[RMDB]
RNA sequence: GGGAACGACUCGAGUAGAGUCGAAAACUGCUUAUGUCGCCUCGACCUGACUAAGACCAACGAGCGUGAUUUGCAAACUGACUGGCUCAAUCUCAAGUCAGAAUCUGUCAAGGCUCAUUCUGGUCCUGUCAAUGCUGUUUUGUGGGACGAGCCUGGAGGGGUAGUUAGAAUUCGUUCUAACUACCCCAAAAGAAACAACAACAACAAC
Reactivity to 2A3 in 0.01 (KOAc 150mM, MgCl2 10mM, bicine 150mM(pH8.5), 24C), signal-to-noise 4, nucleotides 027 to 156: c020u020g000c010u100u040a120u250g030u030c050g120c120c020u030c000g030a050c010c020u020g020a020c010u040a070a030g000a000c000c010a010a030c060g000a000g000c030g010u020g030a040u200u260u140g030c080a030a070a070c000u010g010a010c000u010g030g010c080u060c190a060a200u070c130u050c090a140a020g000u000c000a000g010a020a060u010c010u030g020u020c020a040a050g120g000c010u000c010a040u100u100c060u070g000g000u000c010c020u030g010u030c010a040a090u120g030c080u060g080u070u070u140u140g040u070g000g000g010a010c020g010a010g000c000c030u000g010g020a020
Reactivity to DMS in 0.01 (KOAc 150mM, MgCl2 10mM, bicine 150mM(pH8.5), 24C), signal-to-noise 1, nucleotides 027 to 156: c050u000g020c050u000u010a080u000g010u000c020g030c030c020u010c020g010a140c060c000u060g000a020c010u010a080a070g000a080c000c030a050a120c070g010a020g030c030g030u000g000a070u000u000u000g010c050a060a080a260c040u000g010a160c040u010g000g050c050u010c050a100a150u010c160u010c060a050a000g040u000c010a040g020a040a150u010c010u000g000u000c050a060a020g040g000c020u010c020a110u000u010c040u000g030g020u000c010c040u000g010u000c020a080a200u020g010c030u010g010u000u000u020u040g020u000g030g010g010a070c040g010a040g010c100c000u000g010g000a300
Source information: Chemical mapping of a 207-nucleotide RNA with 2A3 and DMS. It was measured as part of the RMDB library OK3TST. The 2A3 profile rests on 2,470 reads. The DMS profile rests on 3,239 reads. In probing experiments dimethyl sulfate is read out at A N1 and C N3, which are open when not base-paired. The reactions ran in a buffer of 150 mM KOAc, 10 mM MgCl2 and 150 mM bicine (pH 8.5), at 24 C.